The data come from the RNA Mapping Database (RMDB), library RFM100. This 177-nucleotide RNA was probed chemically with 2A3 and DMS. For DMS the reverse transcriptase was MarathonRT. The reactions ran in a buffer of 150 mM KOAc, 10 mM MgCl2 and 150 mM bicine (pH 8.5), at 24 C. For 2A3, 2,191 sequencing reads were counted.
[RMDB]
RNA sequence: GGGAACGACUCGAGUAGAGUCGAAAAUCGGAUUCACUGGGCUUAAAGGGUGCGUAGGCGGCCUGUUAAGUAGGGCGUGAAAUCUGUCGGCUCAACCGGCAAAUUGCGUUCUAAACUGGCAGGCUUGGAUCGAUACACUCUUCGGAGUGUAUCGAUCAAAAGAAACAACAACAACAAC
Reactivity to 2A3 in 0.01 (KOAc 150mM, MgCl2 10mM, bicine 150mM(pH8.5), 24C), signal-to-noise 2, nucleotides 027 to 126: u080c030g040g030a040u080u030c010a020c020u040g010g030g040c010u050u110a070a070a100g040g020g020u060g000c000g050u030a010g010g020c010g020g000c000c010u000g000u000u000a010a020g020u010a010g020g000g000c000g000u040g110a030a030a030u020c040u010g000u000c010g010g000c020u030c300a070a100c050c000g010g000c000a020a000a050u010u060g010c000g000u010u010c000u010a020a060a010c000u010g010g000c000a010g030g000c000u000u020g000
Reactivity to DMS in 0.01 (KOAc 150mM, MgCl2 10mM, bicine 150mM(pH8.5), 24C), signal-to-noise 1, nucleotides 027 to 126: u000c050g000g000a050u000u000c030a030c090u010g000g040g000c070u040u010a060a090a030g010g000g010u000g000c030g020u000a060g000g020c010g000g000c000c010u000g000u000u000a040a010g000u000a040g030g000g020c000g070u000g000a000a030a060u000c050u000g010u000c010g000g000c150u160c300a190a200c010c000g000g000c040a000a020a100u000u000g000c020g000u000u000c000u000a050a000a060c010u000g000g000c000a000g000g000c020u010u000g000